[RMDB]
An RNA of 177 nucleotides, treated with DMS and read out base by base. The reactions ran in a buffer of 150 mM KOAc, 10 mM MgCl2 and 150 mM bicine (pH 8.5), at 24 C. DMS adducts were read by reverse transcription with MarathonRT. Source: RMDB library OK2TRN, as collected in RNAgym. The DMS profile rests on 748 reads. Reactivities are given for positions 27 through 126.
RNA sequence: GGGAACGACUCGAGUAGAGUCGAAAAAGGGGUUAAGGCAAAAAGGAUGGACAAUCACCACAGUCUGUGACAUUAUAUCACUAGCAUUCCAACAUAAUGUCAAAAUAGAAUUGAUCGGAGGAGGGGAAGCUUGAAGACCCUUCGGGGUCUUCAAGCUAAAAGAAACAACAACAACAAC
Reactivity to DMS in 0.01 (KOAc 150mM, MgCl2 10mM, bicine 150mM(pH8.5), 24C), signal-to-noise 1, nucleotides 027 to 126: a070g000g010g040g000u000u020a040a060g010g000c120a010a010a110a060a050g000g000a150u030g010g000a040c080a050a070u000c070a040c070c020a020c110a070g000u020c050u000g020u010g020a020c000a020u000u000a010u000a090u000c030a100c150u000a080g010c030a140u000u010c080c050a070a050c120a010u010a010a020u000g030u010c010a030a050a090a130u000a130g010a040a100u010u000g010a020u000c140g010g010a160g020g000a080g000g000g000g000a040